[RMDB]
RNA sequence: GGGAACGACUCGAGUAGAGUCGAAAAGUGCAAUGCUGUGUCAGUGUCGCCGCGCUCUAACGCUUCCUCUUGCUUCUGUGCGCACCACUGCGACGGUUUUAUGUAGUUAGGCAUACAAUCACCUUUCCAAAAUUAGCGCCUCUUAGAAUGCUAUUGAAUUACCAAAGGGGUUCGCCCCUUUGGUAAUAAAAGAAACAACAACAACAAC
Reactivity to DMS in 0.01 (KOAc 150mM, MgCl2 10mM, bicine 150mM(pH8.5), 24C), signal-to-noise 2, nucleotides 027 to 156: g060u000g000c000a120a090u010g020c000u010g000u000g000u010c030a070g000u010g000u010c030g030c030c030g030c050g020c010u020c030u000a030a080c050g000c110u020u020c060c060u010c070u010u000g010c020u000u010c050u010g010u000g010c080g030c100a110c020c050a060c020u000g010c010g040a050c060g000g020u000u000u010u000a050u030g010u000a040g030u000u000a070g020g020c010a260u010a110c100a050a120u010c090a040c020c010u020u000u000c020c030a060a090a080a070u000u000a060g000c050g010c070c010u010c100u010u030a110g020a060a150u010g000c030u010a170u000u010g010a220
Reactivity to 2A3 in 0.01 (KOAc 150mM, MgCl2 10mM, bicine 150mM(pH8.5), 24C), signal-to-noise 2, nucleotides 027 to 156: g030u010g060c050a040a070u060g000c020u040g110u040g060u140c040a010g000u010g050u150c010g020c140c030g010c020g000c020u050c030u050a100a070c090g010c020u080u070c010c040u170c070u040u070g030c000u040u040c030u130g040u050g020c010g000c040a050c060c030a050c030u050g020c000g060a030c000g000g040u020u020u100u090a050u060g090u040a080g050u040u070a030g000g000c010a020u050a090c070a050a100u090c000a030c020c000u050u050u050c020c030a050a060a120a090u100u050a040g040c010g050c020c000u000c010u070u040a040g010a180a020u070g050c020u030a020u070u170g030a070